[RMDB]
RNA sequence: GGGAACGACUCGAGUAGAGUCGAAAAGGUUUCGGGAAAUUUGUGUGGCAUUCCACUUCUUUGGUGGCUCACAGGUUCUAUCGCAGCAUUUUCUGUGUGCAACGAAACCCCACCAGUAGAGCGGGAGGCUAAUAAUGGGCUUCGGCCCAUUAUUAGCAAAAGAAACAACAACAACAAC
Reactivity to 2A3 in 0.01 (KOAc 150mM, MgCl2 10mM, bicine 150mM(pH8.5), 24C), signal-to-noise 6, nucleotides 027 to 126: g050g000u010u000u010c040g030g040g090a080a100a100u040u060u020g040u020g010u070g070g080c120a180u180u130c030c000a030c050u190u180c100u140u130u230g020g000u000g020g010c000u000c000a030c020a020g010g030u000u000c030u050a080u130c020g030c020a020g020c070a150u040u070u160u090c070u000g000u000g040u020g050c030a040a020c010g000a030a000a000c010c000c000c000a060c000c000a020g130u140a020g040a010g060c060g000g060g010a050g060
Reactivity to DMS in 0.01 (KOAc 150mM, MgCl2 10mM, bicine 150mM(pH8.5), 24C), signal-to-noise 3, nucleotides 027 to 126: g000g010u000u000u000c010g010g000g000a070a050a050u020u000u000g010u000g020u010g040g020c060a160u010u040c040c010a030c210u000u050c170u000u010u050g000g030u000g010g010c080u000c040a020c010a010g010g010u010u000c060u010a100u040c030g000c010a030g000c240a070u010u030u050u040c160u010g010u000g000u010g000c080a150a240c040g020a000a000a000c010c000c040c040a170c030c000a040g000u000a040g000a080g010c090g000g000g010a160g010